RNA sequence: GGGAACGACUCGAGUAGAGUCGAAAAGAGAGAGAGAUGCUAUAUUGUUGACUUUAAAAGAGGGAAACUUGGCUAAGGAAUGUAGGCAGCCUCUCAAAGCUGGACAAAAUGAGCCUCCAGAAGGUACUCCGCUACUUUAAUUCGUUAAAGUAGCGGAAAAAGAAACAACAACAACAAC
Reactivity to DMS in 0.01 (KOAc 150mM, MgCl2 10mM, bicine 150mM(pH8.5), 24C), signal-to-noise 2, nucleotides 027 to 126: g010a200g010a100g030a000g000a080g010a100u010g010c020u010a040u010a050u010u010g000u000u020g000a180c030u010u010u000a040a130a300a130g000a010g000g000g010a130a100a130c050u000u000g010g060c230u010a020a100g020g000a070a040u010g010u000a040g020g000c020a060g020c090c020u000c010u000c010a060a070a050g000c010u000g010g000a060c120a020a060a060a160u000g030a170g010c050c090u000c060c050a120g010a070a030g010g000u010a040c220

This 177-nucleotide RNA was probed chemically with DMS. The RNA was probed in 150 mM KOAc, 10 mM MgCl2 and 150 mM bicine (pH 8.5) at 24 C. DMS adducts were read by reverse transcription with MarathonRT. Values cover nucleotides 27 to 126.